[RMDB]
RNA sequence: GGGAACGACUCGAGUAGAGUCGAAAAGCCGUAGUGGUCGUACACUGAAGGCGCGUAGCCGCGCUCCCAGGCGGCCCGCUCCACCUCGUCCAUCAUCGGGUCCCGUCUUCGAUAUGGCAGAGGAAUGGCGGUGUGGGGAGGCAAAGAAGGCCCGGCGUAGCCUUUAGUUCUUCGGAACUAAAGGCUAAAAAGAAACAACAACAACAAC
Reactivity to 2A3 in 0.01 (KOAc 150mM, MgCl2 10mM, bicine 150mM(pH8.5), 24C), signal-to-noise 3, nucleotides 027 to 156: g000c000c020g060u080a110g270u030g050g000u040c040g010u060a070c070a020c090u050g040a170a060g030g000c020g000c030g030u070a040g150c080c040g000c000g010c030u070c030c010c000a020g040g010c010g010g000c000c020c010g010c000u030c020c000a010c010c010u030c040g160u090c020c000a010u060c010a030u020c030g110g000g060u190c090c030c000g070u070c040u190u110c070g060a080u020a020u200g080g000c040a020g020a030g060g080a040a050u030g000g040c040g000g010u010g010u010g000g030g020g000a030g040g000c040a100a120a040g060a050a050g110g000c010c010c000g010g000c020g000
Reactivity to DMS in 0.01 (KOAc 150mM, MgCl2 10mM, bicine 150mM(pH8.5), 24C), signal-to-noise 1, nucleotides 027 to 156: g030c010c040g000u000a060g010u000g020g010u000c060g000u000a040c060a190c000u010g000a050a090g010g020c040g010c010g020u000a190g060c190c020g000c010g040c040u000c000c000c000a110g040g020c030g030g000c060c000c030g000c030u010c010c010a120c010c050u000c030g030u000c010c050a080u000c110a130u000c020g030g030g010u000c040c020c080g000u020c050u010u000c040g030a180u000a060u000g030g000c080a140g000a240g030g000a100a070u000g020g020c000g030g000u000g010u000g000g000g040g000a080g030g050c060a060a110a140g000a110a100g000g000c000c040c010g030g020c080g020
Structure probing data (2A3 and DMS) for a 207-nucleotide construct. The reactions ran in a buffer of 150 mM KOAc, 10 mM MgCl2 and 150 mM bicine (pH 8.5), at 24 C. 2A3 adducts were read by reverse transcription with SuperScript II with manganese. It was measured as part of the RMDB library OK3TST. Reactivities are rounded to 0.1 and cut off at 0 and 3.